[RMDB]
This 177-nucleotide RNA was probed chemically with DMS.
RNA sequence: GGGAACGACUCGAGUAGAGUCGAAAAGUGUAGUUACUGUUUCGUCGGCUUAACCGCCGAUCCACUACAUGCAAGGGGCAGCCGGGCUGUGAGGCAGCUGCCAGGAUGGUCCUGCCCUUGUCCCGGCGUCUCUAAACAGCUUCGGCUGUUUAGAGACAAAAGAAACAACAACAACAAC
Reactivity to DMS in 0.01 (KOAc 150mM, MgCl2 10mM, bicine 150mM(pH8.5), 24C), signal-to-noise 2, nucleotides 027 to 126: g020u000g000u000a000g000u000u030a180c220u020g010u000u020u000c150g000u000c000g000g000c020u010u010a150a090c300c300g000c000c000g010a020u010c100c060a040c020u020a020c010a000u000g010c120a090a080g000g020g010g020c120a060g010c050c030g000g000g000c000u000g020u000g020a190g040g020c000a040g030c160u020g000c000c020a050g000g020a090u000g040g020u000c300c000u000g000c020c010c000u010u000g000u000c010c010c000g000g010c090
Conditions: 150 mM KOAc, 10 mM MgCl2 and 150 mM bicine (pH 8.5), 24 C. Reactivities are given for positions 27 through 126. The DMS profile rests on 1,035 reads.